[RMDB]
RNA sequence: GGGAACGACUCGAGUAGAGUCGAAAACGCACUCGCAGCUUAAUAACCUGCGCUGAGCCCUUCUCCCCCAGCUUGCCUGUGUCCUAGGGAAUUGGAAGGGCAUCCUUCACAGGAUCGUGUGGAAGUCAUUACUCGUGAGUGUUCGCACUCACGAGAACAAUACGUAACACUUCGGUGUUACGUAUUGAAAAGAAACAACAACAACAAC
Reactivity to 2A3 in 0.01 (KOAc 150mM, MgCl2 10mM, bicine 150mM(pH8.5), 24C), signal-to-noise 5, nucleotides 027 to 156: c030g000c000a020c010u020c010g010c000a000g000c000u050u020a040a000u040a060a050c000c010u000g020c000g010c130u110g060a030g010c000c010c000u030u010c100u090c000c030c010c000c010a020g020c030u110u180g040c000c020u050g010u020g030u100c020c040u050a060g000g030g050a050a080u130u110g050g000a000a010g000g000g000c010a010u000c000c000u060u120c040a050c020a080g030g020a040u050c060g020u030g000u030g070g070a070a050g080u100c070a120u100u180a080c000u000c000g000u000g000a000g010u010g030u050u100c170g070c060a000c000u010c000a000c000g000a000g010a000a000
Reactivity to DMS in 0.01 (KOAc 150mM, MgCl2 10mM, bicine 150mM(pH8.5), 24C), signal-to-noise 3, nucleotides 027 to 156: c040g020c050a120c030u010c040g040c020a030g010c050u000u010a160a120u000a130a090c230c010u000g000c000g020c100u000g040a200g010c000c000c000u000u000c020u000c080c010c010c010c050a090g060c040u010u000g010c060c020u010g010u020g030u000c080c030u000a060g000g020g020a100a100u000u010g010g020a040a060g000g040g020c010a010u000c010c020u000u000c110a090c090a060g020g020a080u000c080g030u000g030u010g000g000a090a300g010u020c080a120u010u000a160c010u000c000g000u000g000a050g030u000g030u000u000c270g030c020a050c000u000c010a010c010g000a000g000a020a120
This 207-nucleotide RNA was probed chemically with 2A3 and DMS. Values are in units of 0.01, from 0 to 300, in steps of 10. Values cover nucleotides 27 to 156. For DMS, 6,678 sequencing reads were counted. The reactions ran in a buffer of 150 mM KOAc, 10 mM MgCl2 and 150 mM bicine (pH 8.5), at 24 C.